[RMDB]
RNA sequence: GGGAACGACUCGAGUAGAGUCGAAAAGCCACUAACGGACAGUCCGUCUGACGUACAGUCUCACUCGCAUGACUAGUCAAAGUCAUGACUGUGAGCGAGUACGACUGAUGGUCAGUUCGACUGUGGAGCACUGCUGACUAUUCGUAGUCAGCAGUGCAAAAGAAACAACAACAACAAC
Reactivity to DMS in 0.01 (KOAc 150mM, MgCl2 10mM, bicine 150mM(pH8.5), 24C), signal-to-noise 2, nucleotides 027 to 126: g010c000c010a030c010u000a100a190c020g030g010a020c000a030g020u000c000c000g040u000c000u000g010a080c010g020u000a020c000a150g010u020c010u000c010a000c000u000c200g000c000a000u010g010a030c000u000a140g020u000c290a110a080a020g000u000c020a020u000g000a100c090u000g010u020g000a020g010c050g010a190g020u000a000c020g000a030c010u010g010a010u000g000g020u000c000a030g010u000u010c040g020a080c150u000g010u000g030g010a100
Reactivity to 2A3 in 0.01 (KOAc 150mM, MgCl2 10mM, bicine 150mM(pH8.5), 24C), signal-to-noise 3, nucleotides 027 to 126: g020c020c000a020c020u030a110a020c010g020g010a000c000a010g020u010c000c010g000u000c000u010g020a020c000g010u010a010c010a040g070u070c000u000c000a000c000u050c020g030c000a010u010g010a010c010u040a040g200u220c060a200a240a000g020u000c010a040u020g050a120c000u020g000u010g000a000g000c010g020a030g010u000a000c010g010a040c000u010g010a010u020g000g010u000c000a010g010u000u010c000g020a010c050u000g000u010g000g010a050
The record gives the reactivity of an RNA of 177 nucleotides to DMS and 2A3. Conditions: 150 mM KOAc, 10 mM MgCl2 and 150 mM bicine (pH 8.5), 24 C. 2A3 adducts were read by reverse transcription with SuperScript II with manganese. The 2A3 profile rests on 5,872 reads. The DMS profile rests on 1,796 reads. The data come from the RNA Mapping Database (RMDB), library OK2TST. Reactivities are given for positions 27 through 126.